[RMDB]
RNA sequence: GGGAACGACUCGAGUAGAGUCGAAAAGAACUGACUCGCUGGGGAACUACAACUAGUAGCUGCUUCAUCGAUCUGCUGAAGCGCGCACGGCAGGGAGAAGCCGAAAGUUGCCCUGUGCUGAAGCGCGCACGGCAACCGAAAGGUGCGCUCCAUUAAAGUGAAAUAUGUGGUUCGCCACAUAUUUCACAAAAGAAACAACAACAACAAC
Reactivity to 2A3 in 0.01 (KOAc 150mM, MgCl2 10mM, bicine 150mM(pH8.5), 24C), signal-to-noise 2, nucleotides 027 to 156: g060a050a050c060u040g030a020c010u000c020g070c020u030g050g010g010g020a060a010c040u050a010c080a170a060c050u120a070g080u070a020g070c150u160g000c020u010u040c020a100u160c050g060a070u030c060u070g000c090u030g060a160a000g020c020g000c000g010c000a040c020g050g000c030a030g000g100g010a120g000a130a020g010c020c020g140a130a060a040g030u030u030g020c000c000c030u050g000u060g070c060u110g040a160a060g050c030g000c000g000c010a000c020g000g020c020a050a020c030c000g090a180a030a050g060g000u030g020c040g000c020u020c010c010a070u190u300a100a120a090
Structure probing data (2A3) for a 207-nucleotide construct. 2A3 adducts were read by reverse transcription with SuperScript II with manganese. The 2A3 profile rests on 1,397 reads. The RNA was probed in 150 mM KOAc, 10 mM MgCl2 and 150 mM bicine (pH 8.5) at 24 C.